[RMDB]
RNA sequence: GGGAACGACUCGAGUAGAGUCGAAAAGAAGAGGUAACCACAACCGAAACCAACGAUCAUCCGGUGCUGGUGACUCACGCGCUGUCAAUACCGUGACACAGAGUGCCACGUCCUCCACAGAUGAAUCCAGGUUAUCCGUUUUCGAACGGAUAACCUGAAAAGAAACAACAACAACAAC
Reactivity to 2A3 in 0.01 (KOAc 150mM, MgCl2 10mM, bicine 150mM(pH8.5), 24C), signal-to-noise 1, nucleotides 027 to 126: g140a070a000g050a010g000g000u070a020a080c060c020a050c040a090a130c030c020g000a150a000a010c020c000a000a070c000g040a070u060c010a030u050c020c040g000g100u030g000c070u050g000g060u020g070a030c000u030c020a050c070g030c000g050c110u040g070u070c000a010a020u010a240c060c000g070u070g030a000c000a000c020a070g120a010g110u060g000c000c000a050c070g000u050c000c000u000c010c000a060c000a030g110a020u050g020a060a070u010c040
Reactivity to DMS in 0.01 (KOAc 150mM, MgCl2 10mM, bicine 150mM(pH8.5), 24C), signal-to-noise 1, nucleotides 027 to 126: g000a110a050g000a150g000g000u000a180a170c050c040a100c090a040a010c050c010g010a100a150a170c050c010a090a170c190g020a050u010c070a050u000c000c050g000g010u000g000c170u000g010g000u000g030a060c090u000c060a010c090g000c060g020c190u000g030u000c110a110a140u010a080c140c060g000u040g010a000c040a090c030a040g010a100g010u000g010c030c020a040c040g010u000c000c000u000c050c040a090c030a060g000a030u000g000a090a000u020c140